[RMDB]
RNA sequence: GGGAACGACUCGAGUAGAGUCGAAAAGGGGUCGCAUCUCUAGCGUGUAGCGAUGAAGUGGAGGGUAGUCCUGAAGCCUCCACGGGACUAUAAUCCUCCAUGGAGCUAUCGGGUGCGACGGAGGCACCCAAAACUAUAGUUGUUCGCAACUAUAGAACAUGCAGACGUACUUCGGUACGUCUGCAUGAAAAGAAACAACAACAACAAC
Reactivity to 2A3 in 0.01 (KOAc 150mM, MgCl2 10mM, bicine 150mM(pH8.5), 24C), signal-to-noise 1, nucleotides 027 to 156: g030g040g000g000u020c010g000c050a030u030c040u100c120u180a070g100c040g100u270g060u160a010g020c030g280a300u020g020a000a000g000u010g010g000a000g010g000g030u020a060g000u000c010c000u000g010a060a010g000c020c000u000c000c000a030c010g000g000g010a000c010u020a010u050a300a050u020c020c000u000c000c000a010u010g000g000a000g010c000u000a000u080c070g040g020g000u010g000c000g010a000c040g000g000a000g000g000c000a040c000c000c000a060a110a000a000c010u000a010u010a030g030u000u030g030u040u140c300g070c190a000a000c000u010a010u010a010g030a010a010